This 177-nucleotide RNA was probed chemically with 2A3 and DMS. DMS adducts were read by reverse transcription with MarathonRT. The RNA was probed in 150 mM KOAc, 10 mM MgCl2 and 150 mM bicine (pH 8.5) at 24 C. Reactivities are given for positions 27 through 126.
RNA sequence: GGGAACGACUCGAGUAGAGUCGAAAAGAUAUGGAUCCGAUAACAGCGAUAAGCUACCAUCGGAAACGAUGGAAUAGCUUUUGACGCUGGAAGCGGAUCCUAAGUCAAAGGGUUGUUCGCAACCCAACAAAAGUACAUCGUUCGCGAUGUACUUUUGAAAAGAAACAACAACAACAAC
Reactivity to 2A3 in 0.01 (KOAc 150mM, MgCl2 10mM, bicine 150mM(pH8.5), 24C), signal-to-noise 3, nucleotides 027 to 126: g020a000u070a030u190g010g000a010u000c010c000g000a010u070a250a040c000a000g000c010g060a090u020a140a010g010c000u020a030c010c000a010u000c000g020g000a040a030a000c010g010a000u000g030g050a260a300u060a040g000c010u000u080u070u170g220a110c020g000c000u010g000g010a060a110g020c000g000g000a000u000c010c000u010a020a020g030u030c060a110a070a040g010g010g000u020u020g020u040u090c120g030c080a010a030c050c000c000a030a000
Reactivity to DMS in 0.01 (KOAc 150mM, MgCl2 10mM, bicine 150mM(pH8.5), 24C), signal-to-noise 6, nucleotides 027 to 126: g000a050u000a300u000g000g000a020u000c000c000g010a040u000a190a300c010a010g010c000g020a140u010a030a020g010c000u000a060c000c000a010u000c000g000g020a120a060a120c000g010a020u000g000g000a110a160u000a010g010c000u000u000u010u010g030a160c090g040c010u000g000g030a090a170g010c020g000g000a000u000c000c000u000a010a100g000u000c040a090a120a190g000g000g000u010u010g000u000u020c240g010c040a020a020c000c000c000a070a100